[RMDB]
RNA sequence: GGGAACGACUCGAGUAGAGUCGAAAACUUAUCCGGUUUUAACGCUGUUUUAUGGGCGCAAAGGUUUACGGAUAAACAACUAAUAAUUAAACCUUUUGUGUGCGAAACGUGGUUGUUUAACGUACUCACUGCCCCCAGGGAUUCGUCCCUGGGGGAACACCUGAAAGGGGUUCGCCCCUUUCAGGUGAAAAGAAACAACAACAACAAC
Reactivity to 2A3 in 0.01 (KOAc 150mM, MgCl2 10mM, bicine 150mM(pH8.5), 24C), signal-to-noise 1, nucleotides 027 to 156: c020u030u010a010u030c010c010g000g000u010u030u020u030a080a040c050g000c050u070g070u220u160u110u210a140u220g170g030g000c030g020c020a030a010a010g030g000u000u000u010a010c000g000g010a000u000a020a130a030c030a060a000c070u190a080a070u240a120a030u280u100a020a000a040c000c000u060u010u070u160g050u010g020u000g020c070g020a080a050a010c030g020u030g030g020u100u050g020u060u060u110a050a000c000g010u030a030c020u020c060a050c020u070g040c010c000c000c000c000a000g050g000g000a000u060u100c120g050u000c080c000c000u000g000g000g000g010g010a000a000
Background
This 207-nucleotide RNA was probed chemically with 2A3. For 2A3 the reverse transcriptase was SuperScript II with manganese. It was measured as part of the RMDB library M2RFPK. Conditions: 150 mM KOAc, 10 mM MgCl2 and 150 mM bicine (pH 8.5), 24 C. Values are in units of 0.01, from 0 to 300, in steps of 10.